RNA sequence: GGGAACGACUCGAGUAGAGUCGAAAAAUGACAUAAGGAGUUCAUUUCACACCAAACAUCUUUCCAGCAUGUUUCUCCCAUUGAGAAACAUCCUAGCAUUUAAGGCCUCUUAAUGUAAGAUAAGCCGCGAUAUGCAAGUGUUCGCACUUGCAUAUCGAAAAGAAACAACAACAACAAC
Reactivity to 2A3 in 0.01 (KOAc 150mM, MgCl2 10mM, bicine 150mM(pH8.5), 24C), signal-to-noise 2, nucleotides 027 to 126: a000u000g020a000c020a040u240a170a130g150g000a090g040u090u040c010a030u030u100u080c090a040c000a020c020c000a000a140a010c030a060u080c050u050u160u050c030c010a000g010c040a020u010g000u000u020u000c010u030c010c080c070a180u030u300g010a020g000a000a000a020c000a000u020c000c030u030a060g010c070a110u040u040u190a070a050g010g010c000c020u030c000u090u040a160a110u260g100u110a030a000g000a030u020a020a030g020c020c010g010
Reactivity to DMS in 0.01 (KOAc 150mM, MgCl2 10mM, bicine 150mM(pH8.5), 24C), signal-to-noise 2, nucleotides 027 to 126: a040u000g020a020c050a120u020a120a120g050g000a070g020u020u030c020a020u000u000u000c050a120c110a130c030c010a040a090a060c170a060u010c030u000u000u000c040c050a100g050c280a030u000g000u000u000u000c030u000c000c300c140a130u020u010g020a020g000a010a010a000c010a010u000c060c040u020a100g030c140a080u000u000u000a030a120g010g000c030c140u000c000u000u000a050a060u000g010u030a050a030g000a030u000a060a170g020c000c000g010